An RNA of 170 nucleotides, treated with 2A3 and DMS and read out base by base.
It was measured as part of the RMDB library 15KLIB.
2A3 adducts were read by reverse transcription with SuperScript II with manganese.
The reactions ran in a buffer of 150 mM KOAc, 10 mM MgCl2 and 150 mM bicine (pH 8.5), at 24 C.
For DMS the reverse transcriptase was MarathonRT.
[RMDB]
RNA sequence: GGGAACGACUCGAGUAGAGUCGAAAAAGACGUUACUAAGCUAUAUUUAGGUGGUAUGAGCUACUUUUGUGUAGAUCAUAGACCUGUGUGUAGUUUUCCACUUUGCGCUAAUGGUCUUGUAUUCGGCAAACACCUUGGUUCGCCAAGGUGAAAAGAAACAACAACAACAAC
Reactivity to 2A3 in 0.01 (KOAc 150mM, MgCl2 10mM, bicine 150mM(pH8.5), 24C), signal-to-noise 9, nucleotides 027 to 129: a010g030a000c030g030u070u050a030c090u090a060a020g010c000u000a000u010a010u060u090u110a020g000g000u030g040g100u020a000u010g000a010g020c000u010a010c010u080u190u300u300g300u130g000u050a000g000a030u010c000a010u000a000g040a010c000c000u000g000u000g000u000g010u010a000g000u010u020u070u070c040c010a070c010u010u010u020g000c000g000c000u000a010a010u020g010g000u020c010u020u030g030u050a150u050u080c040g020g000c010a040a060a030
Reactivity to DMS in 0.01 (KOAc 150mM, MgCl2 10mM, bicine 150mM(pH8.5), 24C), signal-to-noise 6, nucleotides 027 to 129: a020g000a030c060g000u030u020a000c070u040a070a060g010c020u000a000u000a000u030u020u040a000g020g020u000g010g070u040a000u000g000a020g030c010u020a010c000u010u060u090u050g050u050g020u010a020g000a040u000c010a030u000a020g000a010c000c000u020g010u000g010u000g020u000a000g030u010u000u030u020c090c110a150c010u010u010u020g020c000g020c030u020a020a010u000g000g010u010c080u000u000g020u000a090u000u000c070g000g030c150a090a050a140
For 2A3, 65,795 sequencing reads were counted. For DMS, 82,846 sequencing reads were counted.